[RMDB]
RNA sequence: GGGAACGACUCGAGUAGAGUCGAAAACGGUAUUGGUCAAGGCUAUACCGACAGCGCACCUUCAAAAGGGCGCUUAAUCCCCGGCCAAGCGCCGAAAUAUGAAUAGACACCGCUGGUCUGGUAGGGCAAAACAUGGCGAUCUUCGGAUCGCCAUGAACCAUACAAGUGACUUCGGUCACUUGUAUGGAAAAGAAACAACAACAACAAC
Reactivity to 2A3 in 0.01 (KOAc 150mM, MgCl2 10mM, bicine 150mM(pH8.5), 24C), signal-to-noise 2, nucleotides 027 to 156: c000g010g010u040a030u070u210g030g000u090c060a140a130g090g030c010u020a010u000a020c010c000g040a040c050a020g010c000g000c040a300c090c010u060u080c100a120a110a020a000g000g000g000c000g000c010u000u010a010a010u000c000c000c000c000g000g000c000c010a170a020g020c040g010c120c020g070a050a040a000u250a060u090g090a070a060u060a090g030a020c040a040c020c050g000c040u050g000g050u020c050u020g000g060u060a070g040g000g000c030a030a040a030a070c010a010u000g000g000c000g000a000u000c000u020u030c080g050g020a000u000c010g010c020c000a000u000g000a000a000
Reactivity to DMS in 0.01 (KOAc 150mM, MgCl2 10mM, bicine 150mM(pH8.5), 24C), signal-to-noise 1, nucleotides 027 to 156: c000g030g000u010a070u000u010g140g020u000c050a110a110g060g010c020u000a100u010a010c050c000g010a080c110a060g020c030g010c000a070c010c020u000u000c190a070a140a100a200g010g010g000c010g070c000u000u010a030a160u000c010c000c000c050g010g000c030c010a110a090g010c040g000c020c040g010a040a050a100u000a080u010g000a140a140u000a130g000a110c050a160c020c000g000c030u000g010g010u000c010u000g030g000u000a090g020g000g000c060a040a050a130a300c000a010u000g000g020c000g030a020u000c000u000u010c260g030g000a010u000c000g000c000c010a000u000g000a020a150